The record gives the reactivity of an RNA of 207 nucleotides to 2A3 and DMS.
The data come from the RNA Mapping Database (RMDB), library RNAMAK.
The 2A3 profile rests on 3,137 reads.
The RNA was probed in 150 mM KOAc, 10 mM MgCl2 and 150 mM bicine (pH 8.5) at 24 C.
RNA sequence: GGGAACGACUCGAGUAGAGUCGAAAACCACUAUUCGUAGUGGAAUGCGUACUACGCACGGAGCACUAUAAUCGUAGGGCCAUGCACUCCCAAAUAGGAGUGUGACCCUACGGUAGUGCGCGAAACGUGCGUAUCGCUGUAUGUAACUUCGGUUACACAUUCACAGCUACUUCGGUAGCUGUGAAUGAAAAGAAACAACAACAACAAC
Reactivity to 2A3 in 0.01 (KOAc 150mM, MgCl2 10mM, bicine 150mM(pH8.5), 24C), signal-to-noise 4, nucleotides 027 to 156: c000c000a000c010u030a060u100u120c300g110u040a020g010u030g020g090a150a130u140g000c000g010u050a160c060u000a010c030g010c000a000c010g060g010a090g010c010a000c020u050a020u090a290a220u130c020g000u000a000g000g020g000c050c030a060u180g010c010a000c010u060c020c030c060a200a290a150u300a130g000g000a000g000u000g000u020g040a090c000c000c000u000a000c000g000g000u010a000g010u010g000c020g020c040g040a130a060a040c020g020u010g000c010g000u010a020u120c000g000c020u020g050u090a060u050g010u000a010a000c000u040u080c190g120g000u010u010a000c030a000
Reactivity to DMS in 0.01 (KOAc 150mM, MgCl2 10mM, bicine 150mM(pH8.5), 24C), signal-to-noise 1, nucleotides 027 to 156: c000c000a050c000u000a040u000u010c260g040u000a020g050u000g020g030a110a070u000g020c000g010u000a110c150u000a010c020g040c000a050c020g000g000a300g000c000a010c010u000a040u000a130a090u030c010g000u000a020g010g000g060c010c000a100u000g060c000a010c000u010c000c010c020a020a130a180u000a050g000g010a020g010u010g060u000g010a020c000c030c000u000a000c000g020g020u010a020g000u000g000c000g000c080g030a080a070a250c020g060u000g000c000g010u000a000u010c040g030c010u010g000u000a070u010g020u000a010a020c000u000u010c280g040g010u000u000a000c000a140